The record gives the reactivity of an RNA of 177 nucleotides to 2A3 and DMS. The reactions ran in a buffer of 150 mM KOAc, 10 mM MgCl2 and 150 mM bicine (pH 8.5), at 24 C. For DMS the reverse transcriptase was MarathonRT.

RNA sequence: GGGAACGACUCGAGUAGAGUCGAAAACGAGGUCGUACAAUACGGUGUUCCCACCCCAAAUAUAUUAGACACUGUGUACGACCAUGAGGAUGUUUGAGGGGUGGGUAAAUAAUUCAGGCAUACUCAAGGUAGACGGAGUAUUCGUACUUCGUCUACCAAAAGAAACAACAACAACAAC
Reactivity to 2A3 in 0.01 (KOAc 150mM, MgCl2 10mM, bicine 150mM(pH8.5), 24C), signal-to-noise 7, nucleotides 027 to 126: c060g040a070g000g000u000c000g000u000a000c040a050a120u120a270c100g020g000u010g030u040u100c000c000c000a000c000c000c000c000a020a240a010u240a020u070a100u130u230a090g040a060c000a000c000u020g010u010g000u070a000c000g000a000c000c000a000u040g010a000g010g000a000u020g030u020u040u070g050a030g000g000g000g000u020g000g000g000u010a000a030a070u180a000a040u070u060c020a010g010g000c000a000u010a020c010u010c030a020a060
Reactivity to DMS in 0.01 (KOAc 150mM, MgCl2 10mM, bicine 150mM(pH8.5), 24C), signal-to-noise 4, nucleotides 027 to 126: c090g000a120g020g020u010c010g020u000a010c020a160a090u070a300c060g000g000u000g000u010u000c000c000c020a020c020c000c000c010a100a100a110u050a070u040a070u020u020a070g010a040c000a010c000u010g010u000g010u010a000c000g010a010c000c010a030u020g000a020g000g010a030u000g000u000u000u010g010a130g000g000g000g010u000g010g000g010u010a010a050a060u030a040a050u020u000c060a000g010g000c000a000u000a020c010u010c000a110a150